[RMDB]
RNA sequence: GGGAACGACUCGAGUAGAGUCGAAAAACGCUUCACAAUGUGCGGCAAAGAAACAUUGUUUUUGCAAAGGCACUUCGCAAUGUGUGCUCAAACAUUGCUUAUUCAAACACGCUUCACAAUGUGCGACAAAACUUCACGGUCUUCGGACCGUGAAGAAGUGACUUCGAAACUUCGGUUUCGAAGUCACAAAAGAAACAACAACAACAAC
Reactivity to 2A3 in 0.01 (KOAc 150mM, MgCl2 10mM, bicine 150mM(pH8.5), 24C), signal-to-noise 1, nucleotides 027 to 156: a000c000g000c010u010u000c050a010c010a040a030u010g000u000g000c000g010g000c130a180a100a090g140a020a110a000c040a030u040u000g000u020u010u020u050u120g020c030a000a020a050g100g000c010a020c020u050u040c030g000c050a000a100u030g020u040g010u040g000c060u040c180a080a020a000c020a000u000u020g020c000u070u070a040u090u130c070a040a070a000c040a060c110g020c020u040u060c040a070c050a160a150u240g060u050g080c070g020a030c050a000a070a010a010c030u020u030c000a010c000g000g000u000c000u030u010c040g050g000a000c010c000g000u000g000a000a000g000a010a000